[RMDB]
RNA sequence: GGGAACGACUCGAGUAGAGUCGAAAACUCACAGGGUGACAGUGGUGGGCCCCUGAUGUACCAAUCUGACCAGUGGCAUGUGGUGGGCAUCGUUAGUUGGGGCUAUGGCUGCGGGGGCCCGAGCACCUCGGACCAGAUUAUUCGUAAUCUGGUCCGAAAAAGAAACAACAACAACAAC
Reactivity to 2A3 in 0.01 (KOAc 150mM, MgCl2 10mM, bicine 150mM(pH8.5), 24C), signal-to-noise 2, nucleotides 027 to 126: c020u040c000a030c030a020g110g000g000u030g050a070c030a170g030u100g150g060u110g030g020g000c000c000c000c000u040g030a090u030g010u070a130c030c020a030a040u080c050u110g070a130c030c020a060g050u050g030g070c090a050u110g020u090g070g140u110g040g020g050c010a040u040c060g080u040u070a060g030u100u050g010g000g000g060c010u000a010u050g050g050c050u040g030c030g000g000g000g010g000c000c000c000g000a010g000c010a000c020c030
Reactivity to DMS in 0.01 (KOAc 150mM, MgCl2 10mM, bicine 150mM(pH8.5), 24C), signal-to-noise 1, nucleotides 027 to 126: c020u000c030a130c130a100g010g020g000u000g000a070c070a130g060u020g010g020u000g000g000g000c020c010c000c000u020g010a100u000g020u030a080c040c040a050a060u010c090u000g010a070c060c060a050g010u010g000g030c030a050u000g000u000g000g020u010g000g000g010c040a020u000c190g010u000u000a040g000u000u000g000g000g020g020c080u010a040u010g010g010c070u000g000c050g000g000g000g000g000c000c000c000g010a070g010c040a020c050c040